[RMDB]
RNA sequence: GGGAACGACUCGAGUAGAGUCGAAAAUCGAUGUGGUUCGCCACAUCGAAAAGCGUACUACUGCGGGAGCUAACGAACUACAGCUGCUCCCAAAUAGGAGCAAGCUGCGUUAGCGAAGAACGCAGUAUCGCAAAACCAAGCACCUUCGGGUGCUUGGCGUCAAGUUCCUAUUCGUAGGAACUUGACGAAAAGAAACAACAACAACAAC
Reactivity to DMS in 0.01 (KOAc 150mM, MgCl2 10mM, bicine 150mM(pH8.5), 24C), signal-to-noise 1, nucleotides 027 to 156: u000c000g060a000u000g050u000g020g000u000u000c300g040c000c010a010c010a000u010c000g000a000a040a010a190g010c010g010u000a090c220u000a020c000u000g000c020g020g000g020a200g010c010u000a000a000c000g010a180a300c080u010a040c040a040g020c000u000g010c000u000c000c010c010a000a030a110u000a060g000g010a100g000c030a080a060g000c000u010g010c000g020u000u030a010g030c010g000a090a090g010a060a240c010g000c000a030g000u000a010u000c010g010c000a130a070a100a210c000c000a000a040g020c030a000c000c000u000u000c300g090g010g010u000g000c000u000u010g000g000
Reactivity to 2A3 in 0.01 (KOAc 150mM, MgCl2 10mM, bicine 150mM(pH8.5), 24C), signal-to-noise 2, nucleotides 027 to 156: u060c000g000a000u000g000u000g010g020u020u070c160g020c070c000a000c000a020u000c000g000a010a000a000a000g010c010g030u050a070c050u000a000c000u030g000c020g010g010g010a010g000c000u000a000a000c000g010a040a060c090u170a070c290a010g000c000u010g000c000u020c000c000c000a040a040a020u190a020g000g000a000g000c110a180a070g000c020u020g000c000g010u000u010a000g000c020g010a020a030g020a000a010c000g000c000a010g010u000a010u170c010g000c000a000a000a000a050c000c000a000a000g000c010a000c000c000u020u040c140g110g020g000u000g000c020u000u010g000g010

Structure probing data (DMS and 2A3) for a 207-nucleotide construct.
Values cover nucleotides 27 to 156.
Source: RMDB library RNAMAK, as collected in RNAgym.
Conditions: 150 mM KOAc, 10 mM MgCl2 and 150 mM bicine (pH 8.5), 24 C.